Chemical mapping of a 207-nucleotide RNA with DMS and 2A3. The data come from the RNA Mapping Database (RMDB), library M2RFPK. 2A3 adducts were read by reverse transcription with SuperScript II with manganese.

[RMDB]
RNA sequence: GGGAACGACUCGAGUAGAGUCGAAAACGAGUGCAAUAAAGACACGGUUGCCGAUCGGUAUGGAUGCCACCGUGACGGCUCAAUCACACAAGUGCCAACGAUAACGAGGCGCUCGCUAUUGCUGCGUAAAAGCGACGAUCGUUCGCGAUCGUCGCAACCAAUAUAUUUCGUUCGCGAAAUAUAUUGGAAAAGAAACAACAACAACAAC
Reactivity to DMS in 0.01 (KOAc 150mM, MgCl2 10mM, bicine 150mM(pH8.5), 24C), signal-to-noise 2, nucleotides 027 to 156: c020g010a050g030u000g000c020a110a060u000a090a100a170g020a210c010a000c000g010g000u000u010g030c000c030g010a120u000c000g020g010u000a110u000g020g030a190u010g010c050c040a060c010c020g020u010g000a180c130g010g000c040u000c020a110a110u010c070a160c040a040c060a060a090g050u000g000c020c000a060a100c080g010a200u010a080a140c060g010a180g000g020c010g020c020u000c070g050c020u000a050u000u000g020c010u000g000c000g000u010a040a050a070a130g000c000g020a030c000g010a010u000c000g090u000u000c260g020c030g000a000u000c000g020u000c010g020c030a020a020
Reactivity to 2A3 in 0.01 (KOAc 150mM, MgCl2 10mM, bicine 150mM(pH8.5), 24C), signal-to-noise 8, nucleotides 027 to 156: c030g010a020g030u060g020c030a060a100u080a180a190a030g080a040c020a000c020g000g010u020u010g010c020c030g070a070u050c040g040g100u220a120u210g090g060a040u110g030c020c020a010c010c000g010u020g050a060c040g010g010c010u030c050a050a100u110c030a030c020a020c010a170a070g030u010g050c010c010a110a040c090g090a110u100a240a050c070g020a070g060g000c000g010c020u030c020g020c000u050a060u120u200g050c060u060g000c020g060u060a030a050a090a050g000c000g000a000c000g000a000u000c000g010u060u040c200g010c010g090a000u000c000g000u000c000g000c000a000a000